[RMDB]
RNA sequence: GGGAACGACUCGAGUAGAGUCGAAAAGAGCGUCGAGAGACGAAGAGAAGUGCAUAGAUCCACAACGGAGAACGUAAUAAUGCACACCUGUGGCUUAGUGUCCGGAACAACGGGCACAAGAGGCAGAAAUGAGCAGUAUCUUCGGAUACUGCUCAUUAAAAGAAACAACAACAACAAC
Reactivity to 2A3 in 0.01 (KOAc 150mM, MgCl2 10mM, bicine 150mM(pH8.5), 24C), signal-to-noise 4, nucleotides 027 to 126: g070a010g030c020g000u000c010g000a020g000a000g010a080c090g020a080a010g080a000g040a290a040g020u010g000c000a000u020a050g070a130u040c010c010a030c060a190a070c100g040g000a060g050a130a030c060g060u060a050a040u080a110a040u090g010c010a000c010a030c000c000u010g010u050g140g000c000u010u020a040g000u000g000u000c000c000g000g050a080a060c070a100a060c070g000g000g000c000a000c000a010a000g000a010g050g000c010a000g060a030
Reactivity to DMS in 0.01 (KOAc 150mM, MgCl2 10mM, bicine 150mM(pH8.5), 24C), signal-to-noise 6, nucleotides 027 to 126: g010a120g030c000g000u000c000g000a260g000a210g010a010c020g010a060a080g000a130g010a150a120g010u000g000c000a010u000a080g020a120u020c020c010a080c140a090a080c110g000g000a100g000a160a140c130g010u010a070a070u030a090a020u000g000c000a020c020a110c180c010u000g010u010g000g010c000u000u000a090g000u000g010u000c000c000g010g020a120a090c290a110a140c030g010g000g000c000a010c010a030a000g000a020g010g000c020a030g000a070